[RMDB]
RNA sequence: GGGAACGACUCGAGUAGAGUCGAAAAGUGCCAGCGAAGUUGUAUAUUGGGCUACCAUCCAGUGAUGCAAUGGAGGCUUAUUAGGGUUGUCAGUUUUCCACAGGGUAGCAAUUAAAACUGUCUGAAAAAAACGAAACCACCUUCGGGUGGUUUCGAACAGAUACUAAACCUUCGGGUUUAGUAUCUGAAAAGAAACAACAACAACAAC
Reactivity to DMS in 0.01 (KOAc 150mM, MgCl2 10mM, bicine 150mM(pH8.5), 24C), signal-to-noise 1, nucleotides 027 to 156: g010u010g050c050c020a140g000c110g010a170a240g040u000u000g000u000a090u010a120u000u000g010g020g000c070u000a110c070c000a120u010c000c010a020g010u010g020a140u010g010c080a040a020u010g000g010a290g000g020c050u010u000a080u020u010a080g000g000g020u010u000g000u000c000a000g000u000u010u000u000c030c010a120c120a180g030g010g020u000a020g000c030a060a100u010u030a050a060a060a020c010u010g020u010c030u010g020a040a000a080a090a070a160a230c020g010a030a030a010c000c000a000c000c010u010u010c300g110g010g090u000g000g010u000u000u000c000g000a020a150
Reactivity to 2A3 in 0.01 (KOAc 150mM, MgCl2 10mM, bicine 150mM(pH8.5), 24C), signal-to-noise 1, nucleotides 027 to 156: g060u030g000c060c000a060g100c080g040a010a010g000u020u030g010u040a040u030a040u150u080g020g060g010c030u050a020c000c010a040u130c020c030a020g030u050g120a060u040g010c020a000a020u040g020g010a000g090g070c030u070u140a080u100u230a180g140g000g000u010u000g000u000c010a010g010u000u040u270u120c020c020a090c020a060g100g000g000u040a020g060c050a050a050u180u180a060a020a000a000c000u020g000u000c000u000g010a160a180a010a010a000a000a120c000g000a040a000a000c000c010a000c010c010u030u050c190g120g020g000u000g000g010u010u000u000c000g000a000a000